[RMDB]
RNA sequence: GGGAACGACUCGAGUAGAGUCGAAAAUGCACUUUAACGUUUCAUUAUUCAAAGGUAAAGAAAAUGCAUUCUUUGAUCCAAAUACUGAAAUGGGCUUAACGGAAACUGCAUAUCAAUUUACAGCAGGCACAUUGCUGCAUUUCGAUGCAGCAAUGUGAAAAGAAACAACAACAACAAC
Reactivity to 2A3 in 0.01 (KOAc 150mM, MgCl2 10mM, bicine 150mM(pH8.5), 24C), signal-to-noise 2, nucleotides 027 to 126: u040g020c010a050c100u110u110u080a200a030c080g030u030u050u040c020a020u020u130a020u070u060c060a030a040a130g080g000u010a000a020a080g070a010a050a020a030u240g020c020a090u000u000c010u000u050u060g050a050u040c030c000a020a000a030u100a040c010u020g030a000a040a030u070g000g010g000c050u130u090a090a030c040g040g000a090a050a050c020u000g010c020a030u090a040u230c050a100a190u150u150u140a080c020a030g070c000a030g000g050
Reactivity to DMS in 0.01 (KOAc 150mM, MgCl2 10mM, bicine 150mM(pH8.5), 24C), signal-to-noise 2, nucleotides 027 to 126: u000g010c050a080c100u000u010u000a070a110c050g000u000u000u000c040a040u010u010a060u000u000c140a030a130a100g010g000u000a010a010a020g010a010a030a090a190u010g010c180a040u000u000c040u000u000u000g000a050u020c020c050a040a050a050u000a040c100u010g010a010a020a020u000g010g000g000c110u000u010a070a060c140g010g000a060a070a070c060u010g010c020a140u010a090u080c140a050a040u000u000u000a040c160a100g000c060a050g000g020

Conditions: 150 mM KOAc, 10 mM MgCl2 and 150 mM bicine (pH 8.5), 24 C. Chemical mapping of a 177-nucleotide RNA with 2A3 and DMS. The 2A3 profile rests on 1,540 reads. For DMS, 1,328 sequencing reads were counted.